[RMDB]
RNA sequence: GGGAACGACUCGAGUAGAGUCGAAAACUGCGCUGAGCCCUUCUCCCCCAGUUUGCCUGUGUCCUAGGGAAUUGGAAGGUCAUCCUUCACAGGAUCGUGUGGAAGUCCUGCUCGGGGCGGAAGCAUUAUAAACCUUAGACGUUCGCGUCUAAGGUAAGGAUCGUGUUUGAUUCGUCAAACACGAUCCAAAAGAAACAACAACAACAAC
Reactivity to DMS in 0.01 (KOAc 150mM, MgCl2 10mM, bicine 150mM(pH8.5), 24C), signal-to-noise 1, nucleotides 027 to 156: c020u000g020c040g040c060u000g020a160g040c040c070c000u000u010c040u010c020c010c060c000c040a090g040u000u010u000g040c000c010u020g020u000g000u010c090c090u020a120g000g010g020a070a090u000u010g010g020a060a100g020g000u000c100a080u000c000c030u000u000c130a070c050a070g000g010a090u030c090g000u000g040u020g030g010a110a090g000u010c020c000u000g000c070u000c100g010g050g010g010c020g010g050a220a180g000c050a070u000u060a090u000a140a100a080c000c000u000u000a030g000a020c010g040u000u000c300g010c000g010u000c000u000a000a010g030g000u000a000a040
Reactivity to 2A3 in 0.01 (KOAc 150mM, MgCl2 10mM, bicine 150mM(pH8.5), 24C), signal-to-noise 2, nucleotides 027 to 156: c030u040g030c130g020c110u130g050a080g000c000c000c070u060u070c140u220c070c030c050c000c030a030g020u000u080u150g150c000c010u040g010u000g080u100c000c080u020a010g000g010g040a020a070u050u030g040g000a140a040g020g000u150c030a120u120c000c000u160u110c020a020c040a130g000g050a060u070c080g060u050g010u020g040g000a000a050g030u080c020c050u010g030c000u030c030g000g010g000g000c000g020g000a080a010g000c050a000u060u150a070u070a030a180a000c000c040u000u000a000g000a000c000g030u030u110c180g010c010g080u030c030u000a000a000g000g000u000a000a020